[RMDB]
RNA sequence: GGGAACGACUCGAGUAGAGUCGAAAAUCUAGACCUUAACACACUCCCAUCCCUGCGAGCCCAGGAAGAGGCGAGCUCAGGUGAGGGGAUCAGAGGAGGGAUCAAGGAGUCAAUGUCGCCCGUCGGCAGCUUCACACGGAUUCGUCCGUGUGAAGCUAAAAGAAACAACAACAACAAC
Reactivity to 2A3 in 0.01 (KOAc 150mM, MgCl2 10mM, bicine 150mM(pH8.5), 24C), signal-to-noise 2, nucleotides 027 to 126: u060c020u020a010g070a100c000c020u030u080a090a020c010a000c000a030c140u030c020c000c000a070u000c000c030c000u010g020c020g040a030g000c020c020c030a080g060g090a060a060g040a050g030g000c040g030a040g070c000u080c130a030g020g090u190g070a070g000g000g030g010a000u050c050a050g100a100g030g010a030g030g030g000a050u030c030a070a050g060g020a020g000u070c100a010a120u090g090u100c030g000c010c070c000g120u080c030g050g020c010
Reactivity to DMS in 0.01 (KOAc 150mM, MgCl2 10mM, bicine 150mM(pH8.5), 24C), signal-to-noise 2, nucleotides 027 to 126: u020c070u000a170g020a140c100c000u000u000a080a070c110a170c150a160c090u000c000c000c010a080u000c030c000c010u010g000c030g000a240g010c000c020c010a140g010g030a030a150g000a100g030g000c040g000a200g000c070u000c020a020g030g000u010g000a060g000g000g000g000a060u000c100a100g000a130g020g020a090g000g010g000a040u020c080a040a080g000g010a080g010u000c030a100a130u010g030u000c060g010c010c020c000g000u010c060g000g000c130
Conditions: 150 mM KOAc, 10 mM MgCl2 and 150 mM bicine (pH 8.5), 24 C. Structure probing data (2A3 and DMS) for a 177-nucleotide construct. For 2A3 the reverse transcriptase was SuperScript II with manganese. 2A3 is a SHAPE reagent: it acylates the 2'-hydroxyl of flexible nucleotides of all four kinds. It was measured as part of the RMDB library OK2TST.